[RMDB]
RNA sequence: GGGAACGACUCGAGUAGAGUCGAAAACAAUCAACAAUAUGGUUUGUGUAGUUAUGCUGAAAAUCGUUGAGGUUGUAUGGAAUAGGUUAACCGUAAUACCUUAAGUUGAAAAACUUUAAAAUUAAUCAAAAUCAUGUACACUUCGGUGUACAUGAAACAAUCGAAAAUUGUUCGCAAUUUUCGAUUGAAAAGAAACAACAACAACAAC
Reactivity to DMS in 0.01 (KOAc 150mM, MgCl2 10mM, bicine 150mM(pH8.5), 24C), signal-to-noise 1, nucleotides 027 to 156: c060a050a060u000c010a080a060c030a100a170u000a170u000g020g020u000u020u020g030u020g000u000a150g010u000u000a100u010g060c050u000g000a070a020a070a070u000c000g010u000u000g020a120g030g010u000u000g050u000a120u000g010g000a070a120u000a030g000g030u000u020a200a130c060c130g030u000a070a060u000a080c020c030u000u000a010a030g000u000u000g000a170a070a200a060a010c000u000u000u000a050a010a030a090u000u020a050a130u000c020a060a070a100a250u000c010a010u000g000u000a010c000a000c010u010u000c300g080g000u000g000u000a010c000a000u000g000a000a060a040
Reactivity to 2A3 in 0.01 (KOAc 150mM, MgCl2 10mM, bicine 150mM(pH8.5), 24C), signal-to-noise 4, nucleotides 027 to 156: c020a020a080u140c030a010a060c010a080a100u110a070u160g030g030u010u090u070g060u020g020u040a100g030u110u100a090u140g040c060u100g060a100a020a050a060u050c060g000u020u020g010a020g040g030u040u030g020u050a180u100g060g030a080a100u040a110g010g020u050u060a070a030c060c020g030u030a040a000u040a100c000c000u010u050a020a010g000u010u020g030a070a050a000a010a020c020u100u080u150a100a070a050a080u160u200a100a060u100c020a070a060a050a090u020c000a000u000g000u020a000c010a010c020u060u020c160g030g000u000g010u010a000c000a000u000g000a000a000a000